This 207-nucleotide RNA was probed chemically with 2A3. The 2A3 profile rests on 898 reads. The data come from the RNA Mapping Database (RMDB), library M2RFPK. Conditions: 150 mM KOAc, 10 mM MgCl2 and 150 mM bicine (pH 8.5), 24 C. For 2A3 the reverse transcriptase was SuperScript II with manganese.
RNA sequence: GGGAACGACUCGAGUAGAGUCGAAAAGAAGGGUGAAAGCCCUUGAUACUGUAGUGGAAAUUAUAAAUAAGAAGAGUUCUGAGUUGCUUAAGCAGAACUAAAAUAAAAAGACAAGCAUUGUUACAAACAUGGCGAGGUAAGUUCGCUUACCUCGCAACAACUCAACCAACUUCGGUUGGUUGAGUUGAAAAGAAACAACAACAACAAC
Reactivity to 2A3 in 0.01 (KOAc 150mM, MgCl2 10mM, bicine 150mM(pH8.5), 24C), signal-to-noise 1, nucleotides 027 to 156: g070a010a000g020g000g000u040g060a100a020a020g010c030c010c010u000u040g040a050u030a050c070u060g020u120a060g090u120g080g060a080a040a020u130u160a110u260a240a070a060u170a050a060g010a030a020g060a010g050u000u000c000u000g000a010g010u090u030g050c020u070u020a070a020g000c000a000g000a000a000c080u050a020a000a000a040u080a000a070a000a010a000g030a000c040a000a000g000c020a000u000u050g040u080u070a060c070a080a050a030c070a060u150g120g000c000g000a000g000g000u000a000a030g010u010u040c100g000c040u000u000a000c000c000u010c000g000c010a000a000